This 177-nucleotide RNA was probed chemically with 2A3 and DMS.
RNA sequence: GGGAACGACUCGAGUAGAGUCGAAAAGAUAUGGAGGGUCCUGUUGGACGAAUAUGUUCGGAAACGAACAUACUAUCCGGGCAGGAUGAAGCUCCUAAGUCAAAACUAUCCGCUUCGGCGGAUAGAACUAUAAAUAUUCGUUCGCGAAUAUUUAUAGAAAAGAAACAACAACAACAAC
Reactivity to 2A3 in 0.01 (KOAc 150mM, MgCl2 10mM, bicine 150mM(pH8.5), 24C), signal-to-noise 2, nucleotides 027 to 126: g030a030u060a040u180g010g020a000g040g070g060u000c000c010u020g050u040u130g110g070a050c060g030a260a190u000a000u020g010u010u000c030g010g020a030a080a030c010g010a000a000c010a000u010a010c020u050a030u020c050c050g100g080g000c010a000g000g000a020u070g040a020a060g180c000u020c000c010u010a110a000g040u030c050a010a000a100a190c000u000a000u010c000c000g010c040u060u080c300g180g010c000g000g010a000u000a000g010a000a000
Reactivity to DMS in 0.01 (KOAc 150mM, MgCl2 10mM, bicine 150mM(pH8.5), 24C), signal-to-noise 4, nucleotides 027 to 126: g000a060u010a270u020g000g000a010g010g010g010u000c000c010u000g020u000u000g010g030a030c080g010a060a090u000a000u000g000u010u000c000g010g000a110a060a220c010g000a000a000c000a000u000a000c090u000a220u000c020c020g020g010g010c000a010g000g000a030u000g010a110a190g010c000u010c010c000u000a050a130g010u000c030a070a070a130a170c010u000a000u010c010c000g010c000u000u010c220g010g020c000g010g010a000u000a000g000a030a190
Conditions: 150 mM KOAc, 10 mM MgCl2 and 150 mM bicine (pH 8.5), 24 C.